[RMDB]
RNA sequence: GGGAACGACUCGAGUAGAGUCGAAAAACGUCAAGUCAUCAUGGCCUUUAUGUCCGGGGCUGCACACGUCCUACAAUGGAACAUACAGACGGCCGCGAACCCGCGAGGGUAAGCUAAUCCGAAAAAGGACAUUGAACUAAUUCGUUAGUUCAAUGUCAAAAGAAACAACAACAACAAC
Reactivity to 2A3 in 0.01 (KOAc 150mM, MgCl2 10mM, bicine 150mM(pH8.5), 24C), signal-to-noise 9, nucleotides 027 to 126: a000c020g020u030c020a020a020g020u020c000a040u020c010a030u100g040g000c020c010u070u140u090a040u060g020u000c020c010g010g000g000g000c020u030g020c030a030c010a010c090g050u010c010c010u110a100c110a060a160u220g020g010a090a040c020a040u120a030c000a020g080a030c000g020g010c030c020g000c000g010a050a110c000c000c000g000c010g020a080g000g000g010u010a010a000g000c010u050a060a040u030c020c020g090a100a060a040a040a020g150
Reactivity to DMS in 0.01 (KOAc 150mM, MgCl2 10mM, bicine 150mM(pH8.5), 24C), signal-to-noise 7, nucleotides 027 to 126: a090c060g000u010c040a070a050g010u000c040a080u000c050a070u000g010g010c020c030u000u000u010a050u000g010u000c020c010g000g000g010g010c010u010g020c140a100c150a090c150g020u000c000c000u000a080c230a110a090u020g000g000a060a040c060a060u010a100c150a070g000a120c060g010g010c250c090g010c020g010a160a070c000c000c000g000c260g010a140g020g000g000u000a030a240g010c020u010a080a090u010c020c010g010a040a070a070a070a110g010